[RMDB]
RNA sequence: GGGAACGACUCGAGUAGAGUCGAAAAGGGGUCUAAUCGUGGUCGUUGACAUGCUCAGUGCUGAAGCCUCCACGGCAUGGGAGCAACAGCAACGACGUAACAUCGAUUAGACGGAGGCACCCAAAGCAGUAACAGAUGUUCGCAUCUGUUACUGCAAGGUAUCAUAGGGGUUCGCCCCUAUGAUACCAAAAGAAACAACAACAACAAC
Reactivity to DMS in 0.01 (KOAc 150mM, MgCl2 10mM, bicine 150mM(pH8.5), 24C), signal-to-noise 1, nucleotides 027 to 156: g000g040g000g060u000c000u010a000a020u010c010g050u000g020g000u000c000g030u000u000g040a110c080a300u000g020c010u020c000a220g030u000g020c000u030g020a090a100g010c000c030u010c010c000a300c040g020g000c000a240u010g000g030g080a010g010c020a050a170c090a080g020c000a020a050c010g030a020c000g010u020a040a100c190a050u000c010g000a070u000u010a010g050a050c010g000g000a020g110g100c020a300c030c020c030a080a150a300g000c000a010g000u000a020a000c010a030g010a030u000g000u000u000c300g000c010a000u000c000u010g000u010u000a000c000u000g010c000a020a050
Reactivity to 2A3 in 0.01 (KOAc 150mM, MgCl2 10mM, bicine 150mM(pH8.5), 24C), signal-to-noise 4, nucleotides 027 to 156: g130g000g020g000u000c000u000a000a010u000c010g000u010g010g000u000c010g000u000u000g060a180c100a200u120g000c000u010c010a020g010u000g000c000u010g020a060a020g000c010c000u000c000c000a000c010g020g000c010a000u050g190g300g000a000g020c050a060a160c080a140g100c020a020a000c000g000a000c000g020u090a020a020c010a160u080c010g000a000u000u000a000g000a000c000g000g000a000g000g030c000a050c000c010c000a020a040a030g000c020a000g010u000a010a000c000a000g000a010u010g040u110u130c250g020c150a010u000c000u000g000u000u000a000c000u000g000c000a000a000
Source information
Conditions: 150 mM KOAc, 10 mM MgCl2 and 150 mM bicine (pH 8.5), 24 C. Structure probing data (DMS and 2A3) for a 207-nucleotide construct. 2A3 adducts were read by reverse transcription with SuperScript II with manganese.